[RMDB]
RNA sequence: GGGAACGACUCGAGUAGAGUCGAAAAGAUAUGGAUCUGACCCAGUGGACUGGAACGAAGAACUCGGAAACGAGGGAGUUCCGGACUACUGCAGAUCCUAAGUCAAAGGGUGCGUUCGCGCACCCAACAUACUCGGAAUCUUCGGAUUCCGAGUAUGAAAAGAAACAACAACAACAAC
Reactivity to DMS in 0.01 (KOAc 150mM, MgCl2 10mM, bicine 150mM(pH8.5), 24C), signal-to-noise 3, nucleotides 027 to 126: g000a040u010a300u000g000g010a000u010c000u000g010a240c260c280c050a030g020u000g010g010a070c010u010g010g000a000a000c000g010a100a160g000a130a190c000u000c010g010g010a100a120a180c020g010a010g020g000g000a070g000u000u000c000c000g020g000a060c000u000a010c000u000g000c010a010g040a020u000c000c000u000a020a080g000u000c050a090a120a120g020g000g020u000g000c010g000u000u020c260g020c000g020c000a020c000c000c000a030a030
Reactivity to 2A3 in 0.01 (KOAc 150mM, MgCl2 10mM, bicine 150mM(pH8.5), 24C), signal-to-noise 2, nucleotides 027 to 126: g040a030u080a060u160g000g000a000u000c020u010g160a240c000c110c100a000g000u000g000g020a040c010u010g020g020a010a020c030g110a300a190g000a080a020c000u000c000g010g020a090a040a040c000g000a000g030g020g020a030g010u010u010c000c000g000g000a010c010u000a000c010u010g000c000a000g000a000u020c000c010u000a110a020g090u040c070a120a090a120g010g030g010u010g000c020g020u050u130c290g000c000g030c140a000c010c010c010a000a010
The record gives the reactivity of an RNA of 177 nucleotides to DMS and 2A3. Values cover nucleotides 27 to 126. High DMS reactivity at an A or C suggests that its Watson-Crick edge is free. The 2A3 profile rests on 3,998 reads. Conditions: 150 mM KOAc, 10 mM MgCl2 and 150 mM bicine (pH 8.5), 24 C. The DMS profile rests on 2,405 reads.